[RMDB]
RNA sequence: GGGAACGACUCGAGUAGAGUCGAAAACAAGCGGCGUCGUGAAAGCACGCGCGGGCGUCUUCGUUGCGCAACUGCACCACGCUUCGGCCCCACCGAUUUUGAACCACCUUGGCUCUGCCCGGAUUCUCCUUGAGAGCGCGCUGGCCGGCUUCGCUGCCAGUGUAAGCAUGUUCGCAUGCUUACACUGAAAAGAAACAACAACAACAAC
Reactivity to DMS in 0.01 (KOAc 150mM, MgCl2 10mM, bicine 150mM(pH8.5), 24C), signal-to-noise 2, nucleotides 027 to 156: c060a120a050g000c050g020g000c040g010u000c050g000u000g010a100a120a100g060c050a090c040g020c070g010c040g020g030g020c070g050u010c100u000u010c060g040u000u010g060c020g000c030a100a080c100u000g010c030a110c020c020a070c050g020c040u000u000c020g040g000c020c020c000c020a080c050c030g010a140u000u000u000u000g000a100a110c010c000a100c070c040u010u000g030g050c000u000c040u020g000c030c010c030g030g010a130u010u010c020u000c010c040u000u010g010a110g000a090g020c030g020c050g070c020u000g010g020c050c010g030g030c020u000u000c020g030c070u000g030c070
Reactivity to 2A3 in 0.01 (KOAc 150mM, MgCl2 10mM, bicine 150mM(pH8.5), 24C), signal-to-noise 4, nucleotides 027 to 156: c060a040a010g020c010g020g000c010g020u020c000g010u060g130a170a100a030g030c020a020c070g000c010g000c000g000g040g010c070g060u100c100u220u160c060g070u120u140g010c020g000c040a120a140c060u090g010c010a040c040c000a030c030g000c010u090u080c020g070g000c000c030c000c000a050c010c020g070a080u020u000u130u270g060a040a030c020c010a030c040c050u050u090g030g010c020u040c050u110g000c040c010c000g030g010a030u120u010c010u000c030c050u160u170g080a060g010a010g130c030g000c000g000c010u050g070g000c000c000g020g020c020u060u060c030g000c020u030g030c020